[RMDB]
RNA sequence: GGGAACGACUCGAGUAGAGUCGAAAAGUAUAUCAAAGGGACAUAGGAGGAAGUUGAUGGAGCUUCCCAUGGUCAAAAUGGAAUAAUUUGACCAACAAAAUAAAUAAUGUAAUGUUGUAUAAAUGCUACAGGCAUUAAAAGAGUAAUGUGUACAUUAGCAUUUAGUGACGUUCGCGUCACUAAAUGCAAAAGAAACAACAACAACAAC
Reactivity to 2A3 in 0.01 (KOAc 150mM, MgCl2 10mM, bicine 150mM(pH8.5), 24C), signal-to-noise 1, nucleotides 027 to 156: g020u050a010u020a040u190c070a030a140a070g000g000g030a060c030a000u250a130g070g000a050g000g030a010a010g000u070u120g070a100u120g040g000a000g020c030u030u020c000c080c000a020u030g000g000u010c000a000a050a050a000u180g110g050a220a020u180a060a010u100u000u030g000a000c000c030a030a030c040a000a080a050a000u120a040a000a060u090a170a030u050g030u030a000a230u020g000u010u000g000u000a050u010a160a010a020u060g000c000u030a050c060a130g060g010c000a000u020u120a060a080a000a000g100a000g040u180a060a050u080g040u000g030u040a030c030a060u080u090a050
Background: The record gives the reactivity of an RNA of 207 nucleotides to 2A3. The 2A3 profile rests on 401 reads.